Source: RMDB library OK3TST, as collected in RNAgym.
This 207-nucleotide RNA was probed chemically with 2A3 and DMS.
DMS adducts were read by reverse transcription with MarathonRT.
DMS (dimethyl sulfate) methylates the pairing face of unpaired adenines and cytosines.
2A3 adducts were read by reverse transcription with SuperScript II with manganese.

[RMDB]
RNA sequence: GGGAACGACUCGAGUAGAGUCGAAAAAUUCAGGAAGUGGCUUCUCUGUGCUUCGCAUCACUCAAGUCCCAGUCCUAGGAGUCCCCAUCAAUUCUUCCAUUUUCCUCACUCCCAUGGCCAGUCCAUUAGCAAGGCUUAUCAAGUCUACCCCUGAACAUCCCUCAGUAAAUUUCGAUUUACUGAGGGAAAAAGAAACAACAACAACAAC
Reactivity to 2A3 in 0.01 (KOAc 150mM, MgCl2 10mM, bicine 150mM(pH8.5), 24C), signal-to-noise 1, nucleotides 027 to 156: a000u070u050c020a010g040g030a060a070g070u030g140g020c020u070u020c100u010c020u080g030u040g040c010u040u120c080g060c040a060u050c000a040c020u040c040a110a000g020u000c000c010c010a010g030u040c000c010u050a030g000g000a030g040u030c000c060c050c010a060u100c030a020a190u120u050c020u100u010c030c010a030u090u050u010u010c020c000u030c000a020c030u040c050c010c020a020u060g050g000c000c010a010g020u030c050c000a080u020u070a000g080c080a120a020g000g020c000u030u050a080u220c010a030a020g000u010c000u020a070c000c000c050c020u000g000a010a000c010a010
Reactivity to DMS in 0.01 (KOAc 150mM, MgCl2 10mM, bicine 150mM(pH8.5), 24C), signal-to-noise 1, nucleotides 027 to 156: a070u000u000c050a080g050g030a050a060g010u000g020g050c050u000u010c040u020c060u000g020u000g020c110u010u000c110g090c080a070u000c060a060c030u020c050a040a110g000u000c000c020c010a140g010u000c000c020u020a140g000g030a110g010u000c020c000c010c010a090u000c050a080a140u000u000c010u020u000c030c020a130u000u010u000u010c020c000u000c010a100c060u000c030c000c000a090u010g020g020c010c040a140g030u000c030c010a050u000u000a110g010c070a070a130g030g030c000u000u000a060u000c010a070a060g000u020c020u000a190c040c010c020c030u030g030a020a050c080a200
For 2A3, 666 sequencing reads were counted.